[RMDB]
This 177-nucleotide RNA was probed chemically with 2A3 and DMS. The RNA was probed in 150 mM KOAc, 10 mM MgCl2 and 150 mM bicine (pH 8.5) at 24 C. For DMS the reverse transcriptase was MarathonRT. Values cover nucleotides 27 to 126.
RNA sequence: GGGAACGACUCGAGUAGAGUCGAAAAUUCGGUGACGGGUAUUCUUGGGUGGAUAAUACGGCUCUCGUUGUUAUUGCUUAAGAAUACGCGUAGUCGAGAAACGUACCGGCACUUCGGUGCCGGUACGCAAUGGGAUAGCGUUCGCGCUAUCCCAUUGAAAAGAAACAACAACAACAAC
Reactivity to 2A3 in 0.01 (KOAc 150mM, MgCl2 10mM, bicine 150mM(pH8.5), 24C), signal-to-noise 1, nucleotides 027 to 126: u060u000c000g030g010u030g030a030c020g170g120g000u010a000u010u000c000u000u010g020g000g000u090g070g030a000u020a040a000u010a030c000g060g080c090u030c100u100c170g030u040u100g020u010u000a010u010u000g040c010u010u010a000a000g010a020a020u020a020c020g000c000g030u000a000g010u000c000g000a010g030a050a140a000c000g000u000a010c010c000g000g000c010a000c000u080u090c250g080g000u010g000c050c000g000g000u000a000c000g030
Reactivity to DMS in 0.01 (KOAc 150mM, MgCl2 10mM, bicine 150mM(pH8.5), 24C), signal-to-noise 1, nucleotides 027 to 126: u000u000c000g010g000u040g010a030c020g000g010g030u000a010u000u000c010u000u000g000g010g000u000g010g010a010u000a000a010u000a030c020g010g000c300u000c210u020c020g020u000u010g030u000u000a010u000u000g000c010u000u010a010a010g000a020a020u000a000c000g020c010g010u000a020g000u000c010g000a030g000a100a080a210c010g010u000a000c000c000g000g000c000a010c000u000u010c180g030g020u000g010c000c000g020g000u000a000c000g000